RNA sequence: GGGAACGACUCGAGUAGAGUCGAAAAUUCGGCAUAGCUGACCCUGAAGUGUUCGCAAAAAGAUGGCUUGAAUUCUUCACAGAGUGCGAGAGGCGAUGAGGGGGUACAGAAUACACAAAUCAAGGCGUCCAUGCGGAAAUUUCGAUUUCCGCAUGGAAAAAGAAACAACAACAACAAC
Reactivity to DMS in 0.01 (KOAc 150mM, MgCl2 10mM, bicine 150mM(pH8.5), 24C), signal-to-noise 2, nucleotides 027 to 126: u020u010c010g000g020c040a050u010a060g040c000u070g000a040c060c000c010u050g030a120a040g020u000g030u080u020c040g020c060a120a040a130a060a180g000a080u040g050g010c060u000u000g010a030a050u010u000c040u000u030c160a110c160a060g000a130g000u000g000c080g020a070g000a110g010g000c020g030a040u000g000a020g010g020g020g000g020u020a050c110a000g030a060a100u080a100c220a080c110a000a040a080u000c050a100a080g020g010c040g020
Reactivity to 2A3 in 0.01 (KOAc 150mM, MgCl2 10mM, bicine 150mM(pH8.5), 24C), signal-to-noise 2, nucleotides 027 to 126: u010u020c050g060g000c020a160u090a140g010c020u000g020a020c000c000c060u050g060a100a000g030u010g000u050u020c000g000c040a000a000a080a030a030g100a040u120g120g000c030u100u010g000a050a130u240u000c000u070u050c030a040c000a020g140a050g090u020g000c000g000a070g000a080g060g000c050g000a080u050g060a130g030g000g000g000g020u050a050c000a010g040a070a000u200a010c030a010c010a000a200a040u090c040a060a000g030g030c000g000